Annotation: The data come from the RNA Mapping Database (RMDB), library RFMREP. This 177-nucleotide RNA was probed chemically with 2A3 and DMS. The DMS profile rests on 16,710 reads.
[RMDB]
RNA sequence: GGGAACGACUCGAGUAGAGUCGAAAACCGCCCGUCACUAUCUCAGAUGUUUUUCAGGAUGAAGAGUCCAGGCUCUGAAUAAUGAAAAGUAGAUAAGAUGUAAGUCGUAACAAGGUUGCGGUCGGUGCUAAUAUUAACUCUUCGGAGUUAAUAUUAGAAAAGAAACAACAACAACAAC
Reactivity to 2A3 in 0.01 (KOAc 150mM, MgCl2 10mM, bicine 150mM(pH8.5), 24C), signal-to-noise 4, nucleotides 027 to 126: c000c000g020c010c000c000g040u040c030a000c030u070a030u060c030u010c040a030g010a130u040g070u000u000u010u030u020c010a020g020g020a030u020g020a020a030g010a010g030u020c070c060a090g200g010c000u010c000u010g020a030a010u030a030a010u020g020a000a000a000a020g020u030a010g020a070u050a070a030g020a020u050g080u130a080a080g080u090c070g050u080a050a020c040a110a110g080g000u020u010g000c000g000g010u010c010g010g000u040g020
Reactivity to DMS in 0.01 (KOAc 150mM, MgCl2 10mM, bicine 150mM(pH8.5), 24C), signal-to-noise 9, nucleotides 027 to 126: c010c010g000c100c010c010g010u000c160a040c030u000a040u000c020u000c040a030g010a140u000g010u000u000u000u000u000c020a020g000g020a040u000g000a220a030g000a040g020u000c030c220a180g010g010c000u000c000u000g000a230a020u000a040a030u000g000a010a010a020a030g010u000a020g010a130u000a050a030g000a020u000g000u010a090a080g020u010c110g010u000a060a080c140a130a120g010g000u000u000g000c020g010g000u000c010g000g010u000g010